[RMDB]
RNA sequence: GGGAACGACUCGAGUAGAGUCGAAAAUCUUGGGGAGCAGAAAUGUCCAAUGAACGUCUAGUGAGGGCAUUGCUGCUGACACCAAAGAUAUUACCCCCGCUCACUGGUCGCCUGCGAUCAGGGUUCGGAAGAGGACUCGUUUCGACGAGUCCUCUUCAAAAGAAACAACAACAACAAC
Reactivity to 2A3 in 0.01 (KOAc 150mM, MgCl2 10mM, bicine 150mM(pH8.5), 24C), signal-to-noise 3, nucleotides 027 to 126: u020c000u000u010g000g000g000g000a010g000c000a000g030a010a010a000u000g000u000c000c000a020a090u200g060a130a030c060g100u110c180u270a050g040u060g060a080g000g020g000c000a000u000u020g040c000u010g000c000u020g000a000c010a080c020c000a010a080a020g020a000u050a080u050u160a110c020c030c000c000c000g000c020u000c000a010c000u000g000g000u020c010g050c060c110u260g050c000g020a010u000c020a000g000g010g010u070u040c050g010
Reactivity to DMS in 0.01 (KOAc 150mM, MgCl2 10mM, bicine 150mM(pH8.5), 24C), signal-to-noise 2, nucleotides 027 to 126: u000c000u000u020g000g000g000g020a010g030c000a000g030a010a000a000u000g000u000c000c000a150a170u050g050a140a050c060g020u070c230u070a150g000u000g000a200g010g020g040c000a000u000u000g000c000u010g010c000u000g000a210c050a140c000c000a030a010a020g010a020u010a030u010u020a260c010c000c000c000c030g000c010u000c000a020c000u000g010g020u000c010g000c100c190u080g020c000g020a010u000c000a000g040g010g010u000u010c000g020